This 207-nucleotide RNA was probed chemically with DMS and 2A3. For 2A3, 3,410 sequencing reads were counted. Source: RMDB library OK3TST, as collected in RNAgym. For DMS the reverse transcriptase was MarathonRT. Conditions: 150 mM KOAc, 10 mM MgCl2 and 150 mM bicine (pH 8.5), 24 C.
[RMDB]
RNA sequence: GGGAACGACUCGAGUAGAGUCGAAAAGUGAUGGAUCCGUAUACGCGGAGGUCCGUCGCCUGGGUAAAGACAAAGUUAAGACCACGAAAGAACUCAUCUACGCCGAGUUGGACAUCGGAAAUAGCAAUCAGCUUUCUCAGGGAGAACAGACGGUAUACAUGAAAUUUAGGUUCGCCUAAAUUUCAUGAAAAGAAACAACAACAACAAC
Reactivity to DMS in 0.01 (KOAc 150mM, MgCl2 10mM, bicine 150mM(pH8.5), 24C), signal-to-noise 3, nucleotides 027 to 156: g010u010g020a060u000g030g010a010u000c000c030g020u000a120u010a110c220g010c020g060g020a110g030g020u020c000c020g030u000c050g030c010c050u000g010g020g020u010a080a060a080g030a170c050a190a070a140g000u010u000a070a070g020a300c020c040a110c090g020a070a080a150g020a030a060c030u000c020a080u000c080u010a050c100g060c130c040g010a100g000u000u010g010g010a130c030a080u000c020g000g000a040a090a120u000a080g010c030a110a140u010c080a160g010c040u000u000u010c040u000c030a080g020g020g010a180g020a090a070c040a100g000a040c010g000g010u000a090u000a190
Reactivity to 2A3 in 0.01 (KOAc 150mM, MgCl2 10mM, bicine 150mM(pH8.5), 24C), signal-to-noise 5, nucleotides 027 to 156: g080u070g050a070u090g010g030a020u020c020c010g030u070a120u050a260c180g000c020g010g020a040g030g040u020c000c000g000u010c000g040c000c000u030g010g000g060u240a050a060a010g040a070c080a070a120a020g000u040u050a060a040g050a050c020c010a040c110g160a220a050a070g050a030a020c010u010c050a080u060c090u120a040c060g070c130c040g020a020g040u040u030g030g050a050c030a070u070c070g020g010a040a060a030u040a020g010c010a010a080u140c070a040g010c020u000u030u020c020u010c010a010g020g020g020a070g060a080a020c020a030g050a020c010g030g000u050a030u040a100